Record summary: An RNA of 177 nucleotides, treated with 2A3 and DMS and read out base by base. The data come from the RNA Mapping Database (RMDB), library 15KREP. Values cover nucleotides 27 to 126.
[RMDB]
RNA sequence: GGGAACGACUCGAGUAGAGUCGAAAAUGCACGUAUUAAAGCUAAGCACAUUGUCUAUGUAGGAGAUCCAGCACAGUUGCCAGCUCCUAGGACUUUGUUGACUAGAGGCACAUUGGAACCAGAAAAUGAAUUGUACAUACUUCGGUAUGUACAAUUCAAAAGAAACAACAACAACAAC
Reactivity to 2A3 in 0.01 (KOAc 150mM, MgCl2 10mM, bicine 150mM(pH8.5), 24C), signal-to-noise 3, nucleotides 027 to 126: u060g000c040a010c120g070u110a120u080u220a190a070a010g020c020u030a070a000g010c000a000c000a020u000u050g020u000c010u050a120u230g180u040a020g000g020a020g000a030u100c060c000a000g040c030a060c040a090g180u200u090g100c030c000a010g000c000u000c000c000u010a020g010g020a010c000u030u030u020g050u060u030g020a090c010u030a030g030a040g070g000c000a010c000a030u010u060g040g010a030a020c010c000a030g120a020a090a010a010u070
Reactivity to DMS in 0.01 (KOAc 150mM, MgCl2 10mM, bicine 150mM(pH8.5), 24C), signal-to-noise 2, nucleotides 027 to 126: u010g010c040a080c130g000u030a080u020u000a080a150a110g000c000u010a070a070g020c040a030c040a020u010u000g000u000c020u000a100u010g060u010a020g020g030a050g010a060u010c080c130a110g000c010a060c130a090g000u000u000g000c030c070a070g020c030u000c020c000u000a070g000g010a040c020u000u000u000g010u010u010g010a080c060u000a080g000a110g000g000c040a050c070a050u010u010g020g000a100a140c020c040a170g000a030a040a070a120u000